[RMDB]
RNA sequence: GGGAACGACUCGAGUAGAGUCGAAAAAGGUUGGCCAAUAACUAUAUCUUCAGUUGUGAAUACAAAUACUAUGCCAAUAAUCCAUUCUUAUGCUUCAAGAAAAGCGCAAUUAAGGAGCUACUUAAUAGAUACCUUACCCCUUCGGGGGUAAGGUAUCAAAAGAAACAACAACAACAAC
Reactivity to DMS in 0.01 (KOAc 150mM, MgCl2 10mM, bicine 150mM(pH8.5), 24C), signal-to-noise 1, nucleotides 027 to 126: a020g000g000u000u000g000g000c020c140a010a120u030a010a000c190u000a170u000a040u000c010u000u000c150a000g000u080u000g040u010g000a100a170u030a050c250a090a130a170u000a080c180u000a030u000g000c000c000a010a020u000a140a150u010c000c000a120u000u040c000u040u000a080u090g040c000u030u000c090a040a180g000a040a040a000a000g040c250g030c200a000a080u000u010a110a100g040g000a110g000c150u010a080c090u000u000a150a090u000a170
Reactivity to 2A3 in 0.01 (KOAc 150mM, MgCl2 10mM, bicine 150mM(pH8.5), 24C), signal-to-noise 1, nucleotides 027 to 126: a000g090g000u000u000g000g080c010c020a110a050u080a000a000c000u000a230u060a220u210c170u180u060c070a120g060u010u010g040u110g120a170a160u130a040c040a000a100a000u150a080c010u070a040u300g010c030c000a000a000u110a130a080u000c000c000a040u080u000c000u000u130a110u050g010c000u040u110c000a000a080g030a000a100a000a000g000c040g000c090a010a150u010u080a110a000g040g040a070g000c010u000a000c010u080u000a040a010u000a240